Chemical mapping of a 207-nucleotide RNA with 2A3 and DMS.
RNA sequence: GGGAACGACUCGAGUAGAGUCGAAAAUACCAGAGUAUAUAAUUAGGUGCCGUACGGAAACCAUCCCGAUACGCGGCAGUUAGUCCACUAAGCGCUUGUCCAUCCGAAACGUACGCGGUCGCUCAUACUCCGGUCCAUCCGAAACGUACGAGGAUCCAAUAGGGUAGUAGUUCGCUACUACCCUAUUAAAAGAAACAACAACAACAAC
Reactivity to 2A3 in 0.01 (KOAc 150mM, MgCl2 10mM, bicine 150mM(pH8.5), 24C), signal-to-noise 2, nucleotides 027 to 156: u130a010c020c030a020g020a050g080u050a060u040a020u060a170a180u140u080a060g070g000u040g000c000c020g020u040a030c070g000g050a110a060a070c030c030a030u070c030c010c010g050a060u070a090c080g000c000g030g020c000a000g040u010u090a010g000u030c030c000a030c040u030a130a020g010c020g010c100u090u090g040u040c020c000a020u020c030c000g070a130a070a080c010g020u010a010c010g010c010g070g000u040c070g040c030u030c030a020u040a080c010u010c010c020g040g020u020c040c020a050u100c010c040g030a120a080a040c020g050u090a030c020g020a000g050g000a020u050c080c010
Reactivity to DMS in 0.01 (KOAc 150mM, MgCl2 10mM, bicine 150mM(pH8.5), 24C), signal-to-noise 2, nucleotides 027 to 156: u000a100c010c010a090g000a090g010u000a080u000a120u000a110a130u010u000a040g010g000u000g020c010c020g010u000a140c070g000g020a110a090a100c070c100a170u010c020c010c000g010a140u000a040c070g020c030g000g020c020a040g040u000u000a070g050u000c030c060a070c050u000a110a120g010c040g020c040u010u000g000u000c020c030a150u000c020c020g010a020a060a070c060g000u000a020c040g020c040g010g000u000c050g000c010u020c040a060u000a030c010u000c020c020g000g010u000c060c050a180u010c040c010g000a050a070a050c040g010u000a020c010g020a190g010g010a070u000c060c050
Overview:
For DMS, 5,204 sequencing reads were counted. The data come from the RNA Mapping Database (RMDB), library OK3TST. Conditions: 150 mM KOAc, 10 mM MgCl2 and 150 mM bicine (pH 8.5), 24 C. For 2A3, 1,459 sequencing reads were counted.